[RMDB]
RNA sequence: GGGAACGACUCGAGUAGAGUCGAAAAAUACACCAGCAGUAGGACUCAGCCACCGUCACAACAAGGUUGUGCUGGUAUCCGACGGUCGUAUAGCCCUGUCUUGCAGGUUGCCUUGCACUGACGUGCCACACCAUUUACAGAUUCGUCUGUAAAUGAAACAGCAAAGAACUUUCGAGUUCUUUGCUGUAAAAGAAACAACAACAACAAC
Reactivity to DMS in 0.01 (KOAc 150mM, MgCl2 10mM, bicine 150mM(pH8.5), 24C), signal-to-noise 2, nucleotides 027 to 156: a070u010a050c040a150c030c010a080g070c040a050g000u000a030g010g010a020c050u000c040a100g000c000c020a020c030c000g010u000c130a280c150a140a170c130a060a110g020g000u000u000g030u030g020c000u000g020g010u000a040u000c020c020g000a050c030g020g020u000c190g040u000a120u000a080g000c000c000c010u000g010u000c030u000u000g000c040a150g020g010u000u010g000c040c060u000u000g000c010a050c030u000g010a110c110g030u000g020c010c070a140c030a130c110c000a010u010u000u000a000c010a020g000a060u020u000c300g020u000c000u010g000u000a000a000a010u000g010a090a090
Reactivity to 2A3 in 0.01 (KOAc 150mM, MgCl2 10mM, bicine 150mM(pH8.5), 24C), signal-to-noise 3, nucleotides 027 to 156: a000u020a000c030a010c020c000a010g030c080a030g020u040a020g000g040a010c010u020c060a010g000c000c000a020c000c020g160u140c110a090c070a300a090c050a180a090g050g010u050u040g070u180g010c010u010g000g020u010a070u010c010c010g010a030c080g000g010u060c050g010u050a030u070a090g010c000c000c020u030g020u030c040u050u070g020c010a010g020g060u150u160g050c030c000u040u050g000c010a040c080u070g060a010c070g030u070g030c000c010a100c010a040c020c000a000u000u010u000a000c000a000g000a010u010u120c130g080u000c130u010g010u000a010a000a000u010g000a030a020